[RMDB]
RNA sequence: GGGAACGACUCGAGUAGAGUCGAAAAUAAUGGCUGGGGUGCGGAGCAAUGGCACCACGGCAGUCCGGUGGGGGCUCGCCACGUGUGACUGCUGCGUUCGAGCCACUGGUCCCUGCUCCGAAGCUGCGCAAGGGUCGGGCUUCGGCCCGAUCCUUGUAAAAGAAACAACAACAACAAC
Reactivity to 2A3 in 0.01 (KOAc 150mM, MgCl2 10mM, bicine 150mM(pH8.5), 24C), signal-to-noise 3, nucleotides 027 to 126: u170a010a090u160g040g010c020u010g000g000g000g020u050g010c030g010g000a030g030c020a000a040u020g020g000c000a020c050c000a000c000g000g000c000a010g000u000c000c000g010g000u000g000g000g000g030g090c040u010c030g060c010c010a010c020g140u100g030u080g000a010c010u000g010c000u010g000c000g010u030u110c050g030a010g020c000c000a000c000u000g020g090u000c010c000c010u010g000c010u010c000c020g090a090a010g000c000u020g010c020
Reactivity to DMS in 0.01 (KOAc 150mM, MgCl2 10mM, bicine 150mM(pH8.5), 24C), signal-to-noise 2, nucleotides 027 to 126: u060a070a090u020g010g020c000u020g000g010g000g000u000g010c300g030g000a030g000c030a020a040u000g000g010c010a120c120c020a100c020g000g000c000a000g020u010c010c000g020g000u000g010g000g000g010g000c080u020c070g000c020c000a010c000g000u060g030u040g010a010c020u000g000c000u010g000c040g000u020u020c170g010a130g020c010c000a020c070u000g000g000u000c020c010c020u020g000c000u000c000c000g010a060a050g000c010u000g000c210